[RMDB]
RNA sequence: GGGAACGACUCGAGUAGAGUCGAAAAUCACUCUCACCAACGAUUAACCAUGCUGUGCGAGUGCAAGGCGACCAUGCCUGUGGGUCUGCUCAGUGGGAGGGUUGUGUGCCUGAUGUGUGGAUGCGCAGCUACUGAAUCUCUUCGGAGAUUCAGUAGCAAAAGAAACAACAACAACAAC
Reactivity to 2A3 in 0.01 (KOAc 150mM, MgCl2 10mM, bicine 150mM(pH8.5), 24C), signal-to-noise 3, nucleotides 027 to 126: u090c010a010c020u020c000u020c010a060c030c030a080a020c030g130a120u110u150a040a040c030c040a090u130g010c020u060g020u050g060c000g050a040g010u040g030c030a040a060g030g010c020g040a080c090c040a070u160g030c000c000u050g040u030g040g020g030u010c070u080g050c030u020c020a040g050u090g050g000g020a100g000g000g020u020u060g050u010g020u070g030c020c020u040g030a080u050g020u020g010u040g040g040a050u060g020c060g010c040a020
Reactivity to DMS in 0.01 (KOAc 150mM, MgCl2 10mM, bicine 150mM(pH8.5), 24C), signal-to-noise 6, nucleotides 027 to 126: u000c040a060c050u000c010u000c020a030c060c090a080a090c110g000a110u010u000a120a140c110c070a090u000g020c070u000g010u000g010c060g020a060g010u000g010c200a100a050g010g000c010g000a100c110c100a080u010g020c010c020u000g020u000g000g000g010u010c030u000g000c030u010c050a060g020u000g000g000g000a070g000g010g020u010u010g010u010g000u000g000c040c030u000g000a070u000g020u000g010u000g010g010a070u010g010c080g010c130a130
An RNA of 177 nucleotides, treated with 2A3 and DMS and read out base by base. The DMS profile rests on 9,528 reads. The reactions ran in a buffer of 150 mM KOAc, 10 mM MgCl2 and 150 mM bicine (pH 8.5), at 24 C. Values cover nucleotides 27 to 126. The 2A3 profile rests on 3,506 reads.